[RMDB]
RNA sequence: GGGAACGACUCGAGUAGAGUCGAAAAACUGACGGUACGCCGUCAGAACGGUAGAAAAGAUGGUUUGAAAACCACGCCUUCUACCAAUAUAGUAAAUAAAUAGGCGAAGCGGUCAUACGUGACCGCAAAAACAUCCUUGGCUUCGGCCAAGGAUGAACAUCCAGCCAUUGUUCGCAAUGGCUGGAUGAAAAGAAACAACAACAACAAC
Reactivity to 2A3 in 0.01 (KOAc 150mM, MgCl2 10mM, bicine 150mM(pH8.5), 24C), signal-to-noise 2, nucleotides 027 to 156: a000c000u010g000a000c000g000g020u050a020c200g040c030c000g010u000c000a000g000a020a010c010g000g010u000a000g010a000a000a000a020g040a200u020g000g090u050u080u260g120a110a130a020a000c000c000a010c010g000c000c000u000u000c000u000a000c000c000a010a000u180a040u070a020g070u040a000a020a100u100a030a060a000u110a030g000g000c010g010a080a010g000c000g000g000u000c000a010u050a140c240g080u020g000a000c010c000g000c000a000a010a000a000a000c000a000u000c000c000u000u010g000g000c000u020u050c120g070g000c010c000a000a000g000g000a000u000g000a000a000
Source information:
This 207-nucleotide RNA was probed chemically with 2A3. The 2A3 profile rests on 1,468 reads. Source: RMDB library M2RFOK, as collected in RNAgym. The RNA was probed in 150 mM KOAc, 10 mM MgCl2 and 150 mM bicine (pH 8.5) at 24 C. Values cover nucleotides 27 to 156.